[RMDB]
RNA sequence: GGGAACGACUCGAGUAGAGUCGAAAAGGGACGCCUUUAGAAGAAGAGGCUAGGUAGUAUUCCGGUGUGGGAUACUUGGUAAUAUGUAACGCUAAUUGCAUAAGAUUGUAGGACGGAAUUUACAGUCAAAACGGUCCUGCGUUCGCGCAGGACCGAAGCUAUGACCACAGUUCGCUGUGGUCAUAGCAAAAGAAACAACAACAACAAC
Reactivity to 2A3 in 0.01 (KOAc 150mM, MgCl2 10mM, bicine 150mM(pH8.5), 24C), signal-to-noise 2, nucleotides 027 to 156: g020g000g000a020c070g000c000c000u060u060u050a160g060a240a040g030a060a030g000a070g020g000c010u050a030g050g000u010a000g000u000a020u030u010c000c020g130g080u210g020u160g080g000g000a000u000a060c030u030u050g050g020u050a070a040u010a040u080g060u050a040a040c050g040c150u080a150a030u090u040g000c020a000u010a100a050g010a040u020u070g040u030a020g020g000a030c060g060g000a020a010u050u050u070a080c020a000g040u020c000a000a020a070a080c020g000g040u020c000c010u000g010c000g010u010u020c290g030c000g020c050a000g010g040a000c000c000g000a000a000

An RNA of 207 nucleotides, treated with 2A3 and read out base by base. The 2A3 profile rests on 1,219 reads. The RNA was probed in 150 mM KOAc, 10 mM MgCl2 and 150 mM bicine (pH 8.5) at 24 C.